The data come from the RNA Mapping Database (RMDB), library M2PK90. Chemical mapping of a 177-nucleotide RNA with 2A3 and DMS. The reactions ran in a buffer of 150 mM KOAc, 10 mM MgCl2 and 150 mM bicine (pH 8.5), at 24 C. For DMS, 1,750 sequencing reads were counted. 2A3 adducts were read by reverse transcription with SuperScript II with manganese.
[RMDB]
RNA sequence: GGGAACGACUCGAGUAGAGUCGAAAAAGAAAGAGCGUAUUCGCGUCUUGACGUGAAUGAGCCUAGACUGUAGGCUCUAGUGGGAUAGUAACGCUCACUCCCAAAUCGCUAUUCCACAGUCAGUUAAACCAUGGGAGAUGUUCGCAUCUCCCAUGGUAAAAGAAACAACAACAACAAC
Reactivity to 2A3 in 0.01 (KOAc 150mM, MgCl2 10mM, bicine 150mM(pH8.5), 24C), signal-to-noise 2, nucleotides 027 to 126: a060g150a030a100a010g010a000g000c010g000u070a040u050u040c000g010c010g010u020c070u120u210g120a000c020g010u020g010a040a040u030g000a010g000c000c040u040a090g040a300c110u160g150u180a000g010g000c000u000c010u000a030g000u000g010g010g010a010u010a000g020u040a050a010c010g030c000u000c020a020c020u070c000c000c040a000a060a000u130c020g000c000u000a000u020u030c000c000a000c000a020g100u130c020a010g030u050u180a110a110
Reactivity to DMS in 0.01 (KOAc 150mM, MgCl2 10mM, bicine 150mM(pH8.5), 24C), signal-to-noise 2, nucleotides 027 to 126: a060g010a120a120a040g000a000g000c050g010u010a090u000u000c010g040c000g010u010c100u010u010g000a020c000g020u000g000a020a000u000g000a010g010c000c000u000a060g020a070c140u020g010u000a010g010g010c000u000c060u000a030g030u010g000g010g010a000u000a010g010u000a060a050c030g000c000u010c000a090c210u010c000c010c010a020a070a100u000c150g010c000u000a010u000u000c000c000a020c030a110g020u000c050a060g010u000u000a070a180